[RMDB]
RNA sequence: GGGAACGACUCGAGUAGAGUCGAAAAGUCUUAUUUUAAAGUUUGACUCUGGCACCGUUAGCAAGACUUCAGACUGGAAGUGCAAGGUGACAGAUGUACUUUUCCCCGGCCAAAAAUACAGUAGCGAGCAGGGGUGACUUCGGUCACCCCAAAAGAAACAACAACAACAAC
Reactivity to DMS in 0.01 (KOAc 150mM, MgCl2 10mM, bicine 150mM(pH8.5), 24C), signal-to-noise 1, nucleotides 027 to 129: g000u000c040u010u080a040u030u030u000u100a110a120a040g010u010u040u140g070a080c080u000c050u000g000g000c030a000c000c040g000u000u070a160g030c060a210a110g010a150c000u000u000c000a060g050a060c150u020g030g000a000a000g120u000g050c060a000a120g040g000u000g000a090c020a010g000a020u000g010u000a070c000u080u000u000u040c000c000c010c090g020g050c030c040a000a000a000a000a000u160a070c020a210g000u050a030g030c200g030a160g040c110a000
Reactivity to 2A3 in 0.01 (KOAc 150mM, MgCl2 10mM, bicine 150mM(pH8.5), 24C), signal-to-noise 2, nucleotides 027 to 129: g000u000c030u020u140a140u150u260u010u040a040a010a050g010u000u010u150g000a000c020u000c000u000g060g080c110a010c070c000g140u080u060a000g030c100a050a090g020a140c000u000u000c090a180g000a240c040u120g100g050a010a010g000u020g030c000a000a000g000g000u010g020a000c010a000g000a000u130g000u020a040c000u090u000u000u080c000c000c040c000g010g010c000c000a000a000a000a000a090u040a060c010a050g110u000a000g040c070g020a030g020c010a000